[RMDB]
RNA sequence: GGGAACGACUCGAGUAGAGUCGAAAAAACGGACUCACCACCAACUGCACCGGCUACGACAACGGACGCUACCCCAACCAGUCAAACCAGGGCCUCACCACCCACGAGGACUGGGUACACGUAGACAUCGCCGGACACUACGCCGGAAACCACGGCGGAACGUAGGAGAGUUCGCUCUCCUACGUUCAAAAGAAACAACAACAACAAC
Reactivity to 2A3 in 0.01 (KOAc 150mM, MgCl2 10mM, bicine 150mM(pH8.5), 24C), signal-to-noise 2, nucleotides 027 to 156: a000a000c020g010g020a020c010u020c060a030c020c010a020c000c010a080a080c050u110g000c060a050c010c000g010g040c000u080a040c100g080a050c040a110a030c070g030g080a010c070g020c060u070a050c000c000c000c020a010a030c000c020a000g080u020c010a210a010a000c110c000a070g020g100g070c000c000u060c010a070c030c000a060c020c020c000a010c080g030a030g010g020a010c030u030g000g020g000u030a020c060a000c010g040u030a020g060a040c000a120u060c060g000c000c010g000g000a000c000a000c010u090a010c040g010c000c000g000g050a110a010a050c070c080a240c000g000g000c000g050
This 207-nucleotide RNA was probed chemically with 2A3. The data come from the RNA Mapping Database (RMDB), library OK3TST. Reactivities are given for positions 27 through 156.